[RMDB]
RNA sequence: GGGAACGACUCGAGUAGAGUCGAAAAACACCAAAACUGAAAACGGAAGGCAAUCCUUCCACGACGAUACUUACUUUCCUUUGAUCGUCGUUACUACUGGCAUAGCCACCAAGGAGAACAAACAUGAGCGCGGACACUGACUUCGGUCAGUGUCCAAGAAUCACUUCUCGUUCGCGAGAAGUGAUUCAAAAGAAACAACAACAACAAC
Reactivity to DMS in 0.01 (KOAc 150mM, MgCl2 10mM, bicine 150mM(pH8.5), 24C), signal-to-noise 1, nucleotides 027 to 156: a100c080a210c030c010a000a110a210a200c100u000g000a010a090a060a140c100g010g000a050a000g130g000c090a130a110u010c010c010u000u000c030c030a170c000g010a020c000g020a030u000a040c080u030u010a060c040u000u000u030c110c110u030u000u000g010a050u000c000g010u000c000g020u000u000a040c020u010a030c010u020g010g040c040a110u010a230g030c050c000a050c030c040a060a100g040g000a100g020a100a080c070a070a040a020c040a170u000g000a150g000c070g000c130g050g020a040c000a010c000u000g000a040c000u020u000c300g110g010u010c000a000g040u020g000u000c000c000a000a080
Reactivity to 2A3 in 0.01 (KOAc 150mM, MgCl2 10mM, bicine 150mM(pH8.5), 24C), signal-to-noise 5, nucleotides 027 to 156: a000c090a080c040c020a060a040a030a070c140u220g110a110a110a030a020c110g000g010a010a000g020g010c140a060a220u270c010c000u010u000c010c010a000c000g000a000c000g010a010u150a220c020u070u040a040c010u090u160u090c030c000u070u040u090g020a010u000c000g000u000c000g000u010u040a010c010u030a030c020u020g040g000c090a200u100a140g010c020c010a020c030c030a030a040g070g000a050g030a070a050c030a060a080a020c060a100u170g060a030g100c120g020c070g020g000a010c000a000c000u000g010a010c000u060u050c180g050g000u000c000a000g010u000g010u000c000c000a000a000